[RMDB]
RNA sequence: GGGAACGACUCGAGUAGAGUCGAAAAGAUAUGGAACCACUAAGCGAUGAGUAUGGAUCGGAAACGAUCCCAUACGAGCUUAGGUGGUUCCUAAGUCAAAACUCUGAUAGCUUCGGCUAUCAGAGAACCUAGACUGGUUGUUCGCAACCAGUCUAGGAAAAGAAACAACAACAACAAC
Reactivity to DMS in 0.01 (KOAc 150mM, MgCl2 10mM, bicine 150mM(pH8.5), 24C), signal-to-noise 2, nucleotides 027 to 126: g000a010u000a030u000g010g010a010a010c000c000a010c000u010a000a000g030c000g030a250u010g020a060g010u000a010u000g000g000a020u000c010g010g020a010a020a050c000g000a000u000c170c130c110a000u000a000c000g000a010g020c000u000u000a010g000g000u010g000g000u000u000c000c000u000a000a030g000u000c000a090a090a110a180c010u000c000u000g000a020u000a000g010c010u000u010c300g070g010c000u000a000u010c000a010g000a000g010a050a040
Reactivity to 2A3 in 0.01 (KOAc 150mM, MgCl2 10mM, bicine 150mM(pH8.5), 24C), signal-to-noise 2, nucleotides 027 to 126: g000a000u010a030u070g010g000a000a000c000c000a020c020u000a010a000g030c000g220a300u240g000a300g000u000a010u000g000g020a010u010c000g020g000a000a000a000c020g000a000u020c100c000c000a030u000a000c000g050a030g010c000u020u010a040g080g060u000g020g000u000u000c000c010u000a010a000g020u020c010a010a040a040a220c000u000c000u000g010a000u000a010g000c000u070u070c300g150g000c000u020a010u020c000a000g000a000g000a010a000
Chemical mapping of a 177-nucleotide RNA with DMS and 2A3. The RNA was probed in 150 mM KOAc, 10 mM MgCl2 and 150 mM bicine (pH 8.5) at 24 C.